RNA sequence: GGGAACGACUCGAGUAGAGUCGAAAAUAAAAGUCGAAAGUAUUGCUAUAGUUAAGGUUGCGCUUGCCUAUUUAGGCAUACUUCUCAGGAUAGCGCGUUGCAGUCCAACAAGAUCCAGGGACUGUACAAAACAGGCUCGUGUUCGCACGAGCCUGAACGAAUUAGAGUACUUCGGUACUCUAAUUCGAAAAGAAACAACAACAACAAC
Reactivity to DMS in 0.01 (KOAc 150mM, MgCl2 10mM, bicine 150mM(pH8.5), 24C), signal-to-noise 2, nucleotides 027 to 156: u020a070a080a090a120g010u000c030g020a110a040a140g020u000a050u000u000g010c050u000a150u000a090g050u010u000a100a090g010g000u000u000g030c070g000c050u000u000g020c000c000u000a160u010u000u010a080g050g000c010a030u000a010c030u010u000c050u010c060a150g000g000a140u000a050g030c020g040c040g030u000u000g020c020a040g000u000c000c010a050a190c080a070a090g030a090u000c040c020a130g000g000g000a020c000u000g020u000a070c070a050a070a100a180c000a060g000g010c000u000c010g030u000g020u000u000c230g000c020a040c010g020a030g030c000c000u000g000a000a080
Reactivity to 2A3 in 0.01 (KOAc 150mM, MgCl2 10mM, bicine 150mM(pH8.5), 24C), signal-to-noise 3, nucleotides 027 to 156: u100a000a070a030a000g100u080c060g040a050a020a020g020u020a050u130u270g020c040u070a070u210a270g150u170u160a140a030g020g020u050u130g020c020g000c020u030u050g000c000c000u050a140u160u170u190a020g010g000c000a000u000a020c000u040u030c060u010c150a030g000g110a050u020a020g010c020g000c030g030u020u080g000c000a000g000u000c000c000a020a040c020a090a190g020a150u060c040c040a040g040g000g000a000c000u000g000u020a010c070a000a100a010a010c000a000g010g000c000u000c000g010u010g030u030u070c160g010c060a000c000g000a000g010c000c000u000g000a000a000